[RMDB]
This 177-nucleotide RNA was probed chemically with 2A3 and DMS.
Reactivities are given for positions 27 through 126.
The DMS profile rests on 6,069 reads.
RNA sequence: GGGAACGACUCGAGUAGAGUCGAAAAGAUAUGGACAUAGAACUACAAAUUCCCAGUCGUUGAAAUCGGAAACGAUGGAGACUGGAAUUUGCUAUGUCCUAAGUCAAAAUCCUGCUUCGGCAGGAAAUCUAUACUACCUGUUCGCAGGUAGUAUAGAAAAAGAAACAACAACAACAAC
Reactivity to 2A3 in 0.01 (KOAc 150mM, MgCl2 10mM, bicine 150mM(pH8.5), 24C), signal-to-noise 4, nucleotides 027 to 126: g030a010u080a030u140g000g000a000c000a000u020a010g030a110a070c100u220a040c300a010a010a020u030u010c100c040c030a020g000u000c020g260u300u070g000a050a040a000u010c000g020g020a080a050a050c010g000a010u020g000g000a020g010a010c000u000g000g020a000a000u000u000u020g000c000u000a000u010g000u000c000c000u000a060a010g020u010c010a010a020a040a300u000c000c000u000g000c000u050u060c190g160g000c000a000g000g000a070a000a010
Reactivity to DMS in 0.01 (KOAc 150mM, MgCl2 10mM, bicine 150mM(pH8.5), 24C), signal-to-noise 5, nucleotides 027 to 126: g010a040u010a300u000g000g000a010c000a020u000a010g000a080a060c100u040a300c020a000a000a010u000u000c150c020c030a010g010u000c000g010u000u020g000a080a160a020u000c000g010g000a110a110a160c000g010a000u000g010g000a060g010a000c000u000g000g000a010a000u000u000u000g000c000u000a000u000g010u000c000c000u000a010a090g010u020c040a080a060a090a130u000c000c000u000g000c000u000u000c180g020g010c000a010g000g000a000a020a030

The RNA was probed in 150 mM KOAc, 10 mM MgCl2 and 150 mM bicine (pH 8.5) at 24 C.